[RMDB]
RNA sequence: GGGAACGACUCGAGUAGAGUCGAAAAACGUCAUACGCGAAUAAAAGCUGAAAGCAUCUAAGCUUGAAGUCGCCCCUGAAAAUAGACAUUGUUUGAGAUCACUCUUAAAAGAAGAGGUUGAUAGAGUUAAAGAUCUGUACUUCGGUACAGAUCUUUAAAAAGAAACAACAACAACAAC
Reactivity to DMS in 0.01 (KOAc 150mM, MgCl2 10mM, bicine 150mM(pH8.5), 24C), signal-to-noise 3, nucleotides 027 to 126: a090c190g010u000c060a070u010a110c200g000c030g000a020a010u020a140a130a050a000g020c020u000g010a100a170a120g010c200a060u030c080u010a130a040g000c000u020u000g020a090a160g000u000c020g030c000c030c000c010u010g000a050a010a060a060u010a080g000a020c050a080u010u000g010u010u000u030g010a090g020a080u000c030a130c000u000c000u000u010a110a100a170a050g010a000a010g010a020g050g010u040u000g010a060u000a120g000a120g030u000
Reactivity to 2A3 in 0.01 (KOAc 150mM, MgCl2 10mM, bicine 150mM(pH8.5), 24C), signal-to-noise 1, nucleotides 027 to 126: a000c020g020u020c000a020u000a140c030g000c000g060a050a000u000a050a050a000a000g010c000u000g010a010a010a000g050c000a030u170c070u120a200a000g010c000u000u100g010a300a010g050u000c010g000c000c000c000c020u070g000a120a000a000a000u210a070g060a010c030a010u030u190g090u100u000u220g030a100g000a070u010c000a000c010u000c000u060u030a200a230a020a070g210a020a020g000a050g000g070u000u120g160a130u080a060g180a030g010u000

An RNA of 177 nucleotides, treated with DMS and 2A3 and read out base by base. The RNA was probed in 150 mM KOAc, 10 mM MgCl2 and 150 mM bicine (pH 8.5) at 24 C. Values are in units of 0.01, from 0 to 300, in steps of 10. It was measured as part of the RMDB library RFM100.